[RMDB]
RNA sequence: GGGAACGACUCGAGUAGAGUCGAAAAGAUUAGGCAGAUAACAACUAUUACGCGUCUUGCCACUGUAUUGUAAAGUAAACAACAAGAUAUAAGUUUAAUACACCUUCGCGACAAGAUGAAUCAGCAAGUAACAGAUUCUAUUCGUAGAAUCUGUUACAAAAGAAACAACAACAACAAC
Reactivity to 2A3 in 0.01 (KOAc 150mM, MgCl2 10mM, bicine 150mM(pH8.5), 24C), signal-to-noise 5, nucleotides 027 to 126: g020a020u090u140a050g050g000c020a000g080a130u080a140a050c050a050a030c050u070a070u190u150a100c090g010c020g020u000c010u020u030g000c020c010a010c030u060g040u050a070u120u070g080u090a050a080a160g040u030a050a060a030c030a030a010c030a080a020g070a090u080a020u040a250a060g000u010u050u060a090a030u060a020c010a020c020c010u040u050c050g000c030g040a050c010a010a020g030a070u080g050a030a060u050c010a000g070c030a060a110
Reactivity to DMS in 0.01 (KOAc 150mM, MgCl2 10mM, bicine 150mM(pH8.5), 24C), signal-to-noise 5, nucleotides 027 to 126: g010a090u010u010a030g010g010c020a060g000a100u010a070a090c110a060a070c100u010a100u010u000a080c130g010c050g020u000c010u000u000g010c010c020a070c070u010g010u000a020u000u000g010u010a060a070a150g010u010a030a040a040c060a070a090c120a070a070g010a080u020a080u010a090a100g010u000u000u000a040a040u010a080c110a060c080c050u000u000c080g000c040g020a030c030a020a030g000a040u000g000a070a080u010c070a040g010c130a050a090